[RMDB]
RNA sequence: GGGAACGACUCGAGUAGAGUCGAAAAGAAGUGGGAGAAAGGGAGGCGAAGAUAGAAGGGGAGACCCCGAUCAGAAUGCCGAUCGGGUGCAAGCACCUCUGGAGUCAUCCGGCCCCAAAGGAGGAGAAGGCACUGUACUUCGGUACAGUGAAAAGAAACAACAACAACAAC
Reactivity to 2A3 in 0.01 (KOAc 150mM, MgCl2 10mM, bicine 150mM(pH8.5), 24C), signal-to-noise 9, nucleotides 027 to 129: g090a060a010g040u100g010g020g020a040g030a060a070a030g030g010g010a000g010g010c020g020a030a010g020a020u150a040g080a050a020g010g010g000g000a030g020a020c000c010c000c010g000a000u000c000a020g200a300a090u240g120c060c060g020a010u010c000g000g010g000u050g030c040a050a060g030c020a050c030c010u030c030u040g020g010a010g020u010c010a060u030c020c020g000g000c000c000c000c010a030a070a010g030g010a010g010g010a020g010a020a030g040g000
Reactivity to DMS in 0.01 (KOAc 150mM, MgCl2 10mM, bicine 150mM(pH8.5), 24C), signal-to-noise 9, nucleotides 027 to 129: g020a070a050g000u020g010g020g000a040g020a050a100a070g010g010g030a020g000g000c060g000a040a020g000a090u030a070g010a050a030g010g000g000g000a080g000a130c050c000c000c020g000a020u000c010a070g020a170a120u070g020c140c090g010a020u010c010g000g000g030u000g030c110a080a080g020c110a130c060c010u010c040u020g020g020a060g010u010c080a090u000c060c010g000g000c040c010c010c040a020a060a050g000g010a040g000g000a060g000a060a040g010g000

Structure probing data (2A3 and DMS) for a 170-nucleotide construct. DMS adducts were read by reverse transcription with MarathonRT. As a SHAPE reagent, 2A3 marks flexible, mostly unpaired nucleotides at the ribose 2'-OH. Values cover nucleotides 27 to 129. The RNA was probed in 150 mM KOAc, 10 mM MgCl2 and 150 mM bicine (pH 8.5) at 24 C. For 2A3, 58,137 sequencing reads were counted.